[RMDB]
Conditions: 150 mM KOAc, 10 mM MgCl2 and 150 mM bicine (pH 8.5), 24 C. The record gives the reactivity of an RNA of 177 nucleotides to 2A3 and DMS. For DMS the reverse transcriptase was MarathonRT. It was measured as part of the RMDB libraries RFM100 and RFMREP.
RNA sequence: GGGAACGACUCGAGUAGAGUCGAAAACUAAGUGCGAUUGAAGGUGGUCUCGAGCCCUAGACAGCCGGGAGGUGAGCUUAGAAGCAGCUACCCUCUAAGAAAAGCGUAACAGCUUACCGGCCGAGGUUUGAAACUAGUCUUUCGAGACUAGUUUCAAAAAAGAAACAACAACAACAAC
Reactivity to 2A3 in 0.01 (KOAc 150mM, MgCl2 10mM, bicine 150mM(pH8.5), 24C), signal-to-noise 3, nucleotides 027 to 126: c030u070a120a070g080u060g090c040g060a130u090u100g080a140a030g060g010u040g030g020u020c030u020c050g010a020g000c000c010c010u040a060g020a030c010a020g010c010c000g000g000g030a020g010g090u170g050a000g010c000u050u040a080g070a270a000g080c080a010g010c000u190a270c020c000c000u040c010u020a070a040g030a050a070a000a000g000c000g020u050a050a010c020a050g000c000u000u030a020c010c020g010g020c000c000g030a030g080g000u000
Reactivity to DMS in 0.01 (KOAc 150mM, MgCl2 10mM, bicine 150mM(pH8.5), 24C), signal-to-noise 5, nucleotides 027 to 126: c040u000a050a050g000u020g000c070g010a080u000u020g020a090a080g000g000u000g000g010u000c030u010c050g010a070g000c030c010c110u010a090g010a080c290a260g000c000c000g010g000g000a040g000g010u010g010a010g000c010u000u020a100g010a100a170g000c300a040g000c010u010a040c040c020c000u010c010u030a070a070g010a060a100a020a020g000c010g010u000a130a110c150a180g010c000u000u000a130c010c000g020g000c020c000g010a090g000g000u000